Record summary
The record gives the reactivity of an RNA of 177 nucleotides to DMS. The DMS profile rests on 1,012 reads. Conditions: 150 mM KOAc, 10 mM MgCl2 and 150 mM bicine (pH 8.5), 24 C. DMS adducts were read by reverse transcription with MarathonRT.

RNA sequence: GGGAACGACUCGAGUAGAGUCGAAAAGGAUCUAGGAUCGAGUGGCGCUGCGACGAUCGUCUAGUACGGUACAGCAUCUAGGCCACGUACAGGCCUCUGGCCCUGCGCUACGUACAGGCCCAUGGCGGUAUCCGGGGUUUUUCGAAACCCCGGAUACAAAAGAAACAACAACAACAAC
Reactivity to DMS in 0.01 (KOAc 150mM, MgCl2 10mM, bicine 150mM(pH8.5), 24C), signal-to-noise 1, nucleotides 027 to 126: g010g030a020u000c010u010a130g010g010a040u000c020g020a170g000u000g000g000c020g040c020u000g000c060g020a090c140g000a070u000c140g010u010c020u000a100g010u000a000c020g000g020u010a090c140a220g030c050a110u020c130u000a070g020g010c040c050a110c080g020u000a040c060a120g010g000c020c040u020c160u000g020g000c090c060c010u000g000c110g020c020u000a020c050g000u000a070c070a130g000g000c050c020c050a100u020g060g000c100g020